[RMDB]
RNA sequence: GGGAACGACUCGAGUAGAGUCGAAAAAGAUUUUAUGUAUCAAAACGUCGAGUGUUGUACAGUUCUAACUGAUUCGCACAUUAAAAUUUCUAAAAAGGACCAAGACAGACUGAAAGUUAUGUUAGACAACAUAAUGUUAGCUGAUCAAUCUGGAGACAUAUCCAGUACUUUUCGAAGUACUGGAUAUAAAAGAAACAACAACAACAAC
Reactivity to DMS in 0.01 (KOAc 150mM, MgCl2 10mM, bicine 150mM(pH8.5), 24C), signal-to-noise 3, nucleotides 027 to 156: a070g000a140u010u000u000u010a100u030g030u020a150u010c060a100a100a100a120c090g000u000c040g000a180g050u000g000u010u000g030u000a080c020a090g020u000u000c060u040a110a120c000u010g000a110u000u000c050g020c060a050c030a200u000u010a050a060a050a090u000u010u000c060u000a100a020a070a100a120g010g000a070c050c030a030a160g010a190c000a040g000a040c010u000g020a050a080a120g000u010u010a010u000g000u000u000a120g000a120c170a100a050c060a110u000a010a010u010g000u020u000a080g020c080u010g000a140u000c020a050a030u020c030u000g000g010a150g030a160c160
Reactivity to 2A3 in 0.01 (KOAc 150mM, MgCl2 10mM, bicine 150mM(pH8.5), 24C), signal-to-noise 3, nucleotides 027 to 156: a030g050a020u070u110u120u130a060u190g080u020a060u120c050a060a070a050a060c070g020u120c120g060a110g030u050g000u090u210g030u100a020c010a040g010u070u100c090u110a060a150c010u010g010a110u040u090c060g010c020a000c010a020u030u100a010a020a090a090u120u150u080c110u110a190a080a000a000a000g070g010a010c030c000a070a000g010a020c000a000g110a080c020u080g030a200a000a060g010u010u010a000u000g020u010u040a120g060a210c100a040a000c000a050u010a020a010u050g030u060u130a020g000c010u000g060a140u030c020a020a060u060c050u050g000g050a060g010a030c030
Description: This 207-nucleotide RNA was probed chemically with DMS and 2A3. The reactions ran in a buffer of 150 mM KOAc, 10 mM MgCl2 and 150 mM bicine (pH 8.5), at 24 C. Values are in units of 0.01, from 0 to 300, in steps of 10. For 2A3 the reverse transcriptase was SuperScript II with manganese.